[RMDB]
RNA sequence: GGGAACGACUCGAGUAGAGUCGAAAAAGAUAUUGACAUCAAGAAGCAUUCUCCAGUUAGGACGAAGCAAUGCAUCAAUUCCUAUCAUAUGUCCUGGCAAUGUGAUUGAAUAGAAUACGAUUAUUCCCAUGAUCAUCCUGUUCGCAGGAUGAUCAUGAAAAGAAACAACAACAACAAC
Reactivity to 2A3 in 0.01 (KOAc 150mM, MgCl2 10mM, bicine 150mM(pH8.5), 24C), signal-to-noise 7, nucleotides 027 to 126: a000g110a030u100a020u060u100g030a040c050a060u040c020a030a050g090a130a000g080c010a040u080u010c050u040c110c010a040g050u060u120a040g020g010a020c070g060a050a000g040c110a100a070u130g020c010a050u040c040a060a090u080u060c010c020u100a090u110c030a050u080a090u240g050u050c000c010u000g020g010c030a030a040u060g030u080g050a110u010u020g000a050a030u070a130g080a020a020u060a050c040g030a030u070u060a060u100u040c020c000
Reactivity to DMS in 0.01 (KOAc 150mM, MgCl2 10mM, bicine 150mM(pH8.5), 24C), signal-to-noise 6, nucleotides 027 to 126: a080g000a040u010a020u010u010g010a180c140a050u000c030a020a020g010a160a130g000c010a030u010u010c150u020c070c050a060g020u010u020a090g000g010a060c150g000a060a070g000c070a090a080u010g020c070a060u010c050a080a110u030u000c030c010u010a040u030c120a080u040a090u030g000u010c100c010u000g000g020c300a010a020u010g020u000g000a260u000u000g010a020a040u010a180g000a040a010u010a020c070g000a080u030u020a120u010u010c020c020